This 207-nucleotide RNA was probed chemically with 2A3. Conditions: 150 mM KOAc, 10 mM MgCl2 and 150 mM bicine (pH 8.5), 24 C.
RNA sequence: GGGAACGACUCGAGUAGAGUCGAAAAACGAGGUCCAGAGUCACCUUUUCAGCAAAAUGCAGUUAGGGUGCUAGGAUUUCUCGAAAAUGAAAUUGGUCGUAUUAUGCAAGUAGGGCUUGCUUUUGCGCUCCCCGACUUCACCUCAUUCCCAAACAUUGUCCCAAGAAGUGUUCGCACUUCUUGGGACAAAAGAAACAACAACAACAAC
Reactivity to 2A3 in 0.01 (KOAc 150mM, MgCl2 10mM, bicine 150mM(pH8.5), 24C), signal-to-noise 1, nucleotides 027 to 156: a000c000g000a020g010g010u030c000c010a010g070a030g300u230c010a010c010c000u000u000u000u060c020a000g010c040a070a260a300a280u300g010c030a000g010u010u010a000g000g020g000u030g000c000u000a000g000g000a000u000u300u000c000u000c000g040a060a060a000a050u060g070a020a030a010u060u040g010g010u050c000g000u080a040u100u090a050u270g050c070a080a030g010u050a100g100g160g010c020u010u040g000c000u090u030u050u090g030c070g020c060u130c000c000c010c000g050a040c000u160u100c000a020c010c050u060c070a010u040u030c040c000c000a000a010a000c080a020u000u000